[RMDB]
RNA sequence: GGGAACGACUCGAGUAGAGUCGAAAAUCGCGCCGCAGUGGCAUCUGCGCAUGCAGGCCGCGGUGCAGCGCCACGUCGAGGCCGCCGUGUCCAAGACGGUCAACUUGCCCGCCACGGCGACGGUCGACUCUGCCAAUCGCUUCGGCGAUUGGCAGAGAAAAGAAACAACAACAACAAC
Reactivity to DMS in 0.01 (KOAc 150mM, MgCl2 10mM, bicine 150mM(pH8.5), 24C), signal-to-noise 1, nucleotides 027 to 126: u020c170g050c020g060c020c000g040c000a220g000u000g000g040c000a060u010c030u020g000c070g020c220a040u000g010c020a020g040g040c030c040g060c010g000g020u000g000c000a030g000c130g000c020c080a110c170g020u000c030g020a080g020g020c020c020g000c040c000g000u000g000u000c110c040a120a170g020a040c030g010g020u010c060a060a150c170u010u000g020c130c010c040g020c130c040a040c050g000g010c000g010a030c060g000g000u000c020g000a060
Reactivity to 2A3 in 0.01 (KOAc 150mM, MgCl2 10mM, bicine 150mM(pH8.5), 24C), signal-to-noise 1, nucleotides 027 to 126: u080c010g020c010g020c030c000g010c000a060g030u090g040g020c020a160u070c040u050g070c060g040c210a130u300g000c000a000g050g000c000c000g000c020g010g060u010g000c040a020g020c010g000c000c030a040c070g020u000c030g000a020g000g000c000c010g000c000c010g010u040g010u000c060c040a010a030g090a150c060g000g030u040c030a130a160c160u060u160g010c000c020c000g020c020c000a030c000g000g010c000g000a030c050g070g130u070c010g030a040